[RMDB]
RNA sequence: GGGAACGACUCGAGUAGAGUCGAAAAUCCCUGCUCCUUGCACACACCGCCCGUCAAACCACCCGAGCGGGGCGUGAAUGAGGAUCCUUUUCAUUGAAGGACUCGAAUUCAUGUUCUGUAAGGGGGGCAACUUAACCCACUUCGGUGGGUUAAGUUGAAAAGAAACAACAACAACAAC
Reactivity to DMS in 0.01 (KOAc 150mM, MgCl2 10mM, bicine 150mM(pH8.5), 24C), signal-to-noise 2, nucleotides 027 to 126: u010c000c020c010u010g000c100u000c000c010u000u000g040c040a020c010a050c040a060c000c010g000c040c040c030g000u040c130a030a070a140c020c000a070c020c000c010g000a300g000c000g000g000g000g030c000g010u010g000a000a000u000g000a260g000g020a060u000c010c000u040u010u000u020c300a140u040u090g000a000a000g000g040a000c020u000c000g000a230a040u010u010c000a000u020g000u000u010c000u000g000u010a020a300g000g000g000g000g000g050
Reactivity to 2A3 in 0.01 (KOAc 150mM, MgCl2 10mM, bicine 150mM(pH8.5), 24C), signal-to-noise 5, nucleotides 027 to 126: u020c000c000c000u010g000c000u000c010c000u010u040g020c010a010c000a000c010a030c030c020g030c020c000c010g110u130c050a020a090a140c010c020a060c020c010c000g000a010g040c000g010g010g000g000c000g010u000g000a010a000u040g010a010g040g040a030u020c000c000u030u050u030u190c180a280u150u300g030a000a000g000g000a030c010u010c030g060a020a010u010u000c010a000u000g010u020u000c000u010g000u020a020a020g000g000g000g000g000g040